[RMDB]
RNA sequence: GGGAACGACUCGAGUAGAGUCGAAAAUGGCGCCGGAAGUGAACUCUUACAAAGACUAGCUGAACGUGUCAUAGCCUGACCAUAAUCUAUUAUAAUCGCCAUGUAUGUAAGGGACCAGCGAUUUAGCUCUUGAGGAGGCUUUCGAGCCUCCUCAAGAAAAAGAAACAACAACAACAAC
Reactivity to DMS in 0.01 (KOAc 150mM, MgCl2 10mM, bicine 150mM(pH8.5), 24C), signal-to-noise 1, nucleotides 027 to 126: u030g010g000c050g030c010c000g000g030a190a020g000u030g000a220a300c200u000c010u000u000a200c300a140a030a060g010a060c010u000a300g000c030u000g000a300a230c300g040u000g040u010c030a000u000a010g000c000c030u000g000a140c140c030a010u000a050a050u000c090u030a120u050u000a000u080a000a000u050c000g000c000c050a090u000g000u000a000u050g070u030a030a120g000g000g110a010c010c100a170g000c020g030a070u070u000u000a070g020c050
Reactivity to 2A3 in 0.01 (KOAc 150mM, MgCl2 10mM, bicine 150mM(pH8.5), 24C), signal-to-noise 2, nucleotides 027 to 126: u030g010g000c000g020c020c000g020g020a000a000g030u030g010a020a000c000u000c000u040u240a200c170a200a230a000g000a000c000u010a000g000c010u000g000a020a010c000g000u000g010u000c000a000u000a010g020c000c010u080g070a150c000c060a090u200a290a060u090c090u010a050u220u070a120u060a140a000u030c020g000c020c170a080u110g070u280a060u110g010u060a060a170g140g000g020a050c000c000a020g040c000g020a010u000u060u060a000g000c060
This 177-nucleotide RNA was probed chemically with DMS and 2A3. Conditions: 150 mM KOAc, 10 mM MgCl2 and 150 mM bicine (pH 8.5), 24 C. Source: RMDB library OK1LIB, as collected in RNAgym. High DMS reactivity at an A or C suggests that its Watson-Crick edge is free.